Background: Chemical mapping of a 177-nucleotide RNA with DMS.
[RMDB]
RNA sequence: GGGAACGACUCGAGUAGAGUCGAAAAAAAAGAUAUGGAUCUCCUACCCACCUCGGAGCACGCGUUGAAAGGCUCUCGGAAACGAGAGCCUGGAGCGUGCUUUUGAGAGGGAGAUCCUAAGUCAAAAGACAAACUAGUAGUUCGCUACUAGUUUGUCAAAAGAAACAACAACAACAAC
Reactivity to DMS in 0.01 (KOAc 150mM, MgCl2 10mM, bicine 150mM(pH8.5), 24C), signal-to-noise 2, nucleotides 027 to 126: a070a040a080a070g000a070u000a110u010g000g010a010u000c000u000c000c000u000a190c080c060c150a300c120c000u000c000g010g020a010g010c000a000c000g000c000g020u000u020g000a130a130a030g000g010c000u010c000u000c000g030g010a050a030a120c000g030a020g010a010g010c030c000u000g000g040a030g010c000g030u000g000c010u000u000u000u020g070a010g050a120g000g000g000a010g000a010u000c000c010u000a010a070g000u010c090a100a090a070a090
Source information:
For DMS, 1,123 sequencing reads were counted. For DMS the reverse transcriptase was MarathonRT.